Structure probing data (2A3 and DMS) for a 177-nucleotide construct. It was measured as part of the RMDB library TTRDES. 2A3 adducts were read by reverse transcription with SuperScript II with manganese. DMS adducts were read by reverse transcription with MarathonRT.
RNA sequence: GGGAACGACUCGAGUAGAGUCGAAAAGAUAUGGAGCCUGUUCGACAACAACAGCAACGUUCGGAAACGAACGUUGACAUGUUGGAAUUGGGCUCCUAAGUCAAACGGUUAGGUUCGCCUAACCGAAUCAACAAAGAGGGUUCGCCCUCUUUGUUGAAAAAGAAACAACAACAACAAC
Reactivity to 2A3 in 0.01 (KOAc 150mM, MgCl2 10mM, bicine 150mM(pH8.5), 24C), signal-to-noise 3, nucleotides 027 to 126: g010a000u090a030u150g000g000a010g020c000c000u000g060u010u050c060g220a190c100a300a010c010a010a020c020a130g020c010a020a000c000g000u000u000c010g000g040a040a050a070c000g000a030a010c010g000u000u000g040a010c020a150u080g050u010u070g030g110a020a040u190u300g020g000g000c000u000c000c000u000a010a000g040u010c030a060a120a000c010g030g000u000u010a020g040g030u030u060c300g090c070c000u000a000a010c000c000g020a010a220
Reactivity to DMS in 0.01 (KOAc 150mM, MgCl2 10mM, bicine 150mM(pH8.5), 24C), signal-to-noise 5, nucleotides 027 to 126: g010a030u010a300u010g000g000a030g020c000c000u000g020u000u000c000g000a190c150a090a300c040a020a070c090a090g000c020a000a000c000g010u010u010c000g000g000a120a080a220c010g010a000a000c010g010u010u000g010a070c070a090u000g020u010u000g000g020a000a020u000u010g040g000g020c000u000c000c000u000a010a100g010u000c020a110a090a300c030g000g000u000u000a000g000g010u000u020c280g030c000c010u000a000a010c000c000g000a030a050